[RMDB]
RNA sequence: GGGAACGACUCGAGUAGAGUCGAAAAUGUGUACUAUUUUGUUAUGUACGCAUAUCAAAAUAGACUGAGCACAGAAUCAGAUGCAAGAAUUCAAUUGCUUUCUAUUAAAACAGACAUCAGUAUACAGUUCCUCUGUAGACCUUCACUGUCAGCCUGAACUGGAUACUAAUUUCGAUUAGUAUCCAGUAAAAGAAACAACAACAACAAC
Reactivity to 2A3 in 0.01 (KOAc 150mM, MgCl2 10mM, bicine 150mM(pH8.5), 24C), signal-to-noise 9, nucleotides 027 to 156: u040g000u000g010u020a050c000u000a010u000u010u010u010g020u020u010a020u020g020u010a040c230g000c080a000u000a010u010c010a000a010a010a010u010a020g090a060c150u160g070a040g060c020a010c010a030g100a040a060u110c070a040g030a080u060g020c020a020a050g030a170a150u160u200c070a070a120u050u030g010c000u070u150u020c030u040a140u120u180a090a110a080a040c030a010g080a030c010a040u090c020a050g040u050a030u020a110c020a010g020u090u090c020c060u060c040u020g020u030a030g020a090c010c020u060u060c120a050c090u040g020u060c020a030g070c010c070u100g040a040
Reactivity to DMS in 0.01 (KOAc 150mM, MgCl2 10mM, bicine 150mM(pH8.5), 24C), signal-to-noise 6, nucleotides 027 to 156: u010g030u000g010u000a170c000u000a030u010u000u000u000g000u000u000a020u000g010u000a110c270g070c020a020u000a040u000c020a010a020a010a030u000a020g010a130c110u000g010a130g020c000a040c020a110g010a120a130u000c090a100g010a100u000g020c030a160a090g000a120a100u000u000c060a060a120u000u000g000c030u000u000u000c030u000a160u000u000a050a070a090a110c040a060g010a050c040a140u000c030a060g010u000a140u000a030c040a060g010u000u010c110c070u000c040u010g030u000a070g010a050c020c030u000u000c080a060c060u010g020u000c020a170g010c020c010u000g010a080
The record gives the reactivity of an RNA of 207 nucleotides to 2A3 and DMS. The data come from the RNA Mapping Database (RMDB), library OK3TST. The reactions ran in a buffer of 150 mM KOAc, 10 mM MgCl2 and 150 mM bicine (pH 8.5), at 24 C. For DMS, 15,109 sequencing reads were counted. 2A3 adducts were read by reverse transcription with SuperScript II with manganese.